[RMDB]
RNA sequence: GGGAACGACUCGAGUAGAGUCGAAAAUUCGUUUUGCAUCUAUUCCAAGCAUCAAUCAAUACAAUAAAUUUCAGCACCAUAAAGAUAAUAAUAAAAAUCAACAAGAUACGAAAACCCCUUCCAUAUCUUAAUAAUAUCAGUUCGCUGAUAUUAUUAAAAAAGAAACAACAACAACAAC
Reactivity to DMS in 0.01 (KOAc 150mM, MgCl2 10mM, bicine 150mM(pH8.5), 24C), signal-to-noise 2, nucleotides 027 to 126: u040u010c020g010u010u010u000u000g000c050a050u000c040u020a080u000u000c040c050a060a080g010c040a010u020c080a070a070u000c030a030a110u020a100c080a020a050u010a080a090a120u000u030u000c020a040g000c020a070c030c010a070u020a060a060a110g000a100u000a030a030u050a030a090u020a050a050a060a070a050u020c010a010a110c080a010a070g000a140u000a050c070g000a060a040a080a060c030c010c010c020u000u000c030c040a070u020a040u010c050
Reactivity to 2A3 in 0.01 (KOAc 150mM, MgCl2 10mM, bicine 150mM(pH8.5), 24C), signal-to-noise 6, nucleotides 027 to 126: u020u010c010g020u010u020u060u130g040c030a070u000c020u060a080u080u010c040c010a030a010g030c020a030u060c040a080a040u040c010a020a050u080a100c040a050a060u120a150a100a070u080u080u060c020a020g010c000a020c010c010a040u090a130a100a050g010a030u060a150a010u050a090a010u090a110a210a070a020a050u050c000a010a120c020a070a030g020a070u070a050c020g010a030a010a030a060c000c000c000c000u040u000c050c010a050u030a040u090c030
About this RNA
The record gives the reactivity of an RNA of 177 nucleotides to DMS and 2A3. The RNA was probed in 150 mM KOAc, 10 mM MgCl2 and 150 mM bicine (pH 8.5) at 24 C. DMS adducts were read by reverse transcription with MarathonRT. Reactivities are given for positions 27 through 126. 2A3 adducts were read by reverse transcription with SuperScript II with manganese. For 2A3, 3,838 sequencing reads were counted.